This 207-nucleotide RNA was probed chemically with 2A3. The 2A3 profile rests on 594 reads. It was measured as part of the RMDB library M2RFPK.
RNA sequence: GGGAACGACUCGAGUAGAGUCGAAAAACGGUCAUAUACGUAUGACCGAAUGAGCAUAACAGGGCCACCCCAAAGCGUUCACAUUGUGGCCCCUGUCAGAUUCUGGUAAAACUGCGAGUUCUGCUAAAUUAGGUAACUCUCUUCGGAGAGUUACCAAGAAACCCUUAGUGUUCGCACUAAGGGUUUCAAAAGAAACAACAACAACAAC
Reactivity to 2A3 in 0.01 (KOAc 150mM, MgCl2 10mM, bicine 150mM(pH8.5), 24C), signal-to-noise 2, nucleotides 027 to 156: a030c010g000g000u010c010a000u000a000u010a010c090g170u010a010u010g000a060c000c000g030a010a040u100g010a040g040c020a030u040a130a020c000a010g000g000g000c000c000a020c000c060c040c070a080a050a070g160c040g090u260u210c010a100c060a190u090u080g020u010g020g070c020c060c000c020u040g020u070c040a000g070a230u160u000c010u070g060g000u030a020a000a150a180c020u070g020c020g010a040g080u070u050c000u010g080c040u060a080a160a220u170u150a040g000g000u000a000a000c000u010c000u000c020u020u000c070g040g000a010g000a000g000u000u000a010c000c000a000a000